Conditions: 150 mM KOAc, 10 mM MgCl2 and 150 mM bicine (pH 8.5), 24 C. Structure probing data (2A3) for a 170-nucleotide construct. For 2A3, 1,508 sequencing reads were counted.

[RMDB]
RNA sequence: GGGAACGACUCGAGUAGAGUCGAAAAUGUUCUUCUUUCUCUUUCCUCGUCUUCCUCGGUCAACCUCCGGAGUUCCUCUUCCUCCUCCUUGCUGAGGGACUUUCCUCCCGCGCUCAGUUGUUUCUUCGGAUCCUUGGCUUCGGCCAAGGAAAAAGAAACAACAACAACAAC
Reactivity to 2A3 in 0.01 (KOAc 150mM, MgCl2 10mM, bicine 150mM(pH8.5), 24C), signal-to-noise 1, nucleotides 027 to 129: u050g000u010u010c090u030u000c070u040u000u000c160u040c000u000u000u000c020c010u030c020g050u020c080u120u000c000c010u000c000g000g000u050c030a090a050c030c000u030c000c090g040g000a000g000u030u010c060c000u030c000u000u020c000c000u000c020c040u210c000c030u000u140g070c020u040g060a040g020g000g000a000c000u100u130u030c000c000u060c000c000c000g040c030g060c020u020c050a050g080u000u080g000u020u000u000c010u010u000c100g110g000a070
2A3 is a SHAPE reagent: it acylates the 2'-hydroxyl of flexible nucleotides of all four kinds.